[RMDB]
RNA sequence: GGGAACGACUCGAGUAGAGUCGAAAAAGGCAGGACUAACUUGCAGUUCCCACUUGGUCAGACAGAGCGGCAUGUGGAGACUCCCAUCAUGAACUUUUGCUCCAAGAACUACCGCAGAAACAUACCAGAAAAGGCAAGGAACUGUGAGUCAGCUUGAUAAUGGAAAAUAGUUCGCUAUUUUCCAUUAAAAAGAAACAACAACAACAAC
Reactivity to DMS in 0.01 (KOAc 150mM, MgCl2 10mM, bicine 150mM(pH8.5), 24C), signal-to-noise 3, nucleotides 027 to 156: a100g020g010c060a100g010g000a260c020u000a040a060c000u010u010g020c010a090g010u000u010c010c000c020a160c080u020u020g010g020u000c040a130g000a200c080a140g000a200g000c020g000g020c000a040u010g030u000g020g000a070g010a130c080u000c010c000c000a100u010c140a130u000g000a080a030c030u000u010u000u000g020c050u020c040c010a060a190g000a090a140c050u000a010c010c020g030c010a100g010a150a100a120c050a210u000a100c030c020a200g010a070a070a090a070g020g000c080a120a080g000g000a060a060c050u000g020u010g000a020g030u000c010a040g000c000u000u000g010a260
Reactivity to 2A3 in 0.01 (KOAc 150mM, MgCl2 10mM, bicine 150mM(pH8.5), 24C), signal-to-noise 4, nucleotides 027 to 156: a010g090g000c070a050g110g070a210c040u060a010a010c000u050u010g010c000a000g000u010u010c010c010c000a000c020u040u060g030g020u040c050a030g020a190c040a020g070a070g050c000g000g010c050a070u070g020u020g060g000a040g020a060c040u030c040c010c020a070u160c040a080u140g110a100a080c030u000u060u050u080g020c000u010c010c010a050a030g060a090a070c030u050a010c020c000g010c000a020g170a040a110a010c030a040u140a070c000c010a000g150a100a170a010a000g120g040c130a030a070g020g000a030a000c000u000g000u000g010a000g010u010c010a000g020c000u010u020g010a010
The record gives the reactivity of an RNA of 207 nucleotides to DMS and 2A3. Conditions: 150 mM KOAc, 10 mM MgCl2 and 150 mM bicine (pH 8.5), 24 C. The data come from the RNA Mapping Database (RMDB), library OK3TST. The DMS profile rests on 5,488 reads. DMS adducts were read by reverse transcription with MarathonRT.